[RMDB]
RNA sequence: GGGAACGACUCGAGUAGAGUCGAAAAUUGUACACCUUCGGGUGUACAAGCUGUCUAGUCGCUAGCAAACGAUCAAAGCUAGCGACUAGACUUUAAUGAUCGCGACGUGCGCUUUCGAGCGCACGAAUACAGAAUACCUGUUCGCAGGUAUUCUGUAAAAAGAAACAACAACAACAAC
Reactivity to DMS in 0.01 (KOAc 150mM, MgCl2 10mM, bicine 150mM(pH8.5), 24C), signal-to-noise 5, nucleotides 027 to 126: u000u000g010u000a000c000a010c000c000u000u020c200g020g020g010u000g010u000a000c000a010a020g000c300u010g000u000c010u000a000g000u000c000g010c000u010a000g000c000a050a140a100c170g010a100u010c150a080a140a100g000c000u000a000g010c000g000a000c000u000a000g000a010c000u000u020u000a050a080u010g000a080u000c100g020c180g000a170c010g020u000g010c000g010c000u000u000u010c140g010a020g010c000g010c000a000c010g010a050a050